An RNA of 177 nucleotides, treated with DMS and 2A3 and read out base by base. For 2A3, 849 sequencing reads were counted.
RNA sequence: GGGAACGACUCGAGUAGAGUCGAAAAAAGGGCAGAAGGGGGAAGUGAGCAUGUAAGACAGCAGGAGGUGGGCCGGACUUACCCUUCUUAUCAGGAACCCACUCCCACGAUCACUAAAUCACUAACAGAGCAUACUAAAUUUCGAUUUAGUAUGCUCAAAAGAAACAACAACAACAAC
Reactivity to DMS in 0.01 (KOAc 150mM, MgCl2 10mM, bicine 150mM(pH8.5), 24C), signal-to-noise 4, nucleotides 027 to 126: a070a050g000g010g000c070a070g010a070a040g000g000g020g000g030a100a050g010u010g000a100g000c050a090u010g030u010a090a040g020a130c090a070g040c070a080g020g010a060g010g040u000g010g010g010c080c010g000g010a070c120u000u010a130c040c020c030u000u000c030u010u000a060u010c110a080g020g000a080a110c040c010c010a110c070u000c010c020c020a130c130g000a050u000c080a060c100u000a030a090a050u000c080a060c110u000a050a050c180a160
Reactivity to 2A3 in 0.01 (KOAc 150mM, MgCl2 10mM, bicine 150mM(pH8.5), 24C), signal-to-noise 1, nucleotides 027 to 126: a000a000g070g030g000c070a070g040a110a090g080g050g020g040g000a040a040g000u050g000a010g040c040a050u120g060u160a000a100g050a060c050a030g010c060a070g000g060a080g000g100u040g030g000g000c040c000g030g010a020c020u010u050a040c010c000c000u070u050c060u060u040a140u110c020a000g060g000a080a090c000c000c000a010c020u030c010c000c000a030c050g010a060u040c010a010c100u090a020a230a070u180c060a030c130u150a140a000c010a070

2A3 adducts were read by reverse transcription with SuperScript II with manganese.